[RMDB]
RNA sequence: GGGAACGACUCGAGUAGAGUCGAAAAGAUAUGGAGCUGAUGGAGCAACAGCUACAGUGUCGGAAACGACAUGUAGACAUGCUCCGCAGCUCCUAAGUCAAAACCAGACCGGUUCGCCGGUCUGGAACAGACGUGGAUUGUUCGCAAUCCACGUCUGAAAAGAAACAACAACAACAAC
Reactivity to DMS in 0.01 (KOAc 150mM, MgCl2 10mM, bicine 150mM(pH8.5), 24C), signal-to-noise 1, nucleotides 027 to 126: g010a010u000a000u040g000g010a010g030c010u000g000a060u010g000g010a020g000c000a160a080c300a110g010c020u000a020c000a010g050u010g080u010c000g000g010a000a010a040c000g020a020c020a030u010g020u000a000g010a020c060a250u020g010c010u000c010c000g000c010a000g020c000u030c020c000u000a010a020g030u000c020a150a070a210a130c010c000a010g000a000c010c000g000g000u010u000c240g000c000c000g000g030u000c000u000g000g030a040a140
Reactivity to 2A3 in 0.01 (KOAc 150mM, MgCl2 10mM, bicine 150mM(pH8.5), 24C), signal-to-noise 2, nucleotides 027 to 126: g020a000u050a020u040g000g000a010g010c000u040g010a300u190g220g000a000g000c170a150a190c120a300g020c010u000a010c000a190g240u040g030u120c000g020g000a000a000a000c010g000a010c020a010u020g020u010a000g010a020c070a300u300g000c000u020c020c000g020c000a010g010c000u000c010c000u010a010a000g020u000c000a000a030a020a140c010c000a020g000a000c000c000g040g120u110u130c300g060c120c000g120g010u050c000u010g000g010a000a000